[RMDB]
RNA sequence: GGGAACGACUCGAGUAGAGUCGAAAAACAUGACAGUAAACUUUAGGUCAUGAAUAGAAGUGGAUUUUUUUUUACCCUGUGAAAGGAGCUCUAUCCUAGCUCUUGAACUCACACCUUCAAGACUGGGUGAGCUACUAAUGUUCGCAUUAGUAGCUCAAAAAGAAACAACAACAACAAC
Reactivity to 2A3 in 0.01 (KOAc 150mM, MgCl2 10mM, bicine 150mM(pH8.5), 24C), signal-to-noise 7, nucleotides 027 to 126: a000c010a010u010g030a010c030a050g160u270a080a140a140c130u190u140u250a120g060g030u000c000a010u010g030a040a060u150a070g130a150a040g050u140g060g050a100u070u030u020u020u000u000u010u070u240a160c000c000c000u040g030u010g160a100a080a020g060g010a010g030c010u000c010u100a100u100c000c020u000a000g000c060u000c000u020u010g010a010a000c020u050c120a040c030a050c070c030u070u050c010a010a030g020a030c030u000g010g010g000
Reactivity to DMS in 0.01 (KOAc 150mM, MgCl2 10mM, bicine 150mM(pH8.5), 24C), signal-to-noise 3, nucleotides 027 to 126: a130c020a020u000g000a030c020a140g010u050a060a080a130c240u060u020u030a100g000g010u000c040a030u030g010a070a080u030a040g000a120a090g010u000g020g030a030u000u000u000u000u000u000u000u000u000a140c050c040c000u030g020u020g000a070a080a040g000g000a050g010c100u020c100u040a040u000c020c000u010a000g000c160u000c000u000u000g000a000a010c120u010c170a090c180a070c220c150u020u030c000a010a020g000a030c050u000g010g000g010
This 177-nucleotide RNA was probed chemically with 2A3 and DMS. For DMS the reverse transcriptase was MarathonRT. Values cover nucleotides 27 to 126. The RNA was probed in 150 mM KOAc, 10 mM MgCl2 and 150 mM bicine (pH 8.5) at 24 C. High 2A3 reactivity points to a flexible backbone, as in loops and unpaired stretches.